[RMDB]
Structure probing data (DMS and 2A3) for a 177-nucleotide construct. Reactivities are given for positions 27 through 126. Conditions: 150 mM KOAc, 10 mM MgCl2 and 150 mM bicine (pH 8.5), 24 C. High 2A3 reactivity points to a flexible backbone, as in loops and unpaired stretches. It was measured as part of the RMDB library TTRDES.

RNA sequence: GGGAACGACUCGAGUAGAGUCGAAAAGAUAUGGAACUUAAUAGGGAGCUGUGUGGUCGGAAACGACCACCAGCGACGAUCUAUACAGUUCCUAAGUCAAACUAGUGAAGGUUCGCCUUCACUAGAACAGUGAAGCAUAGUUCGCUAUGCUUCACUGAAAAGAAACAACAACAACAAC
Reactivity to DMS in 0.01 (KOAc 150mM, MgCl2 10mM, bicine 150mM(pH8.5), 24C), signal-to-noise 3, nucleotides 027 to 126: g000a010u010a150u020g000g010a010a010c000u000u020a160a100u010a020g010g040g010a030g000c000u000g010u010g010u000g000g030u000c020g010g010a030a030a090c010g010a010c000c000a010c000c000a000g010c000g000a040c270g000a030u020c010u000a030u010a100c300a030g000u000u000c000c000u000a020a160g010u000c010a150a100a280c010u000a010g010u000g000a010a000g000g010u000u020c300g020c000c000u000u000c000a000c000u000a020g000a100a170
Reactivity to 2A3 in 0.01 (KOAc 150mM, MgCl2 10mM, bicine 150mM(pH8.5), 24C), signal-to-noise 3, nucleotides 027 to 126: g020a000u030a030u090g000g000a030a000c000u100u150a240a030u060a290g040g000g050a060g000c000u020g110u120g000u000g300g000u010c000g020g000a030a000a000c000g000a000c000c020a000c010c000a010g000c000g010a020c000g000a010u000c000u010a070u020a110c170a110g000u010u000c000c000u010a030a020g000u030c070a140a140a160c010u000a010g010u000g010a010a000g060g000u060u210c300g140c050c000u020u020c000a010c000u000a010g000a030a040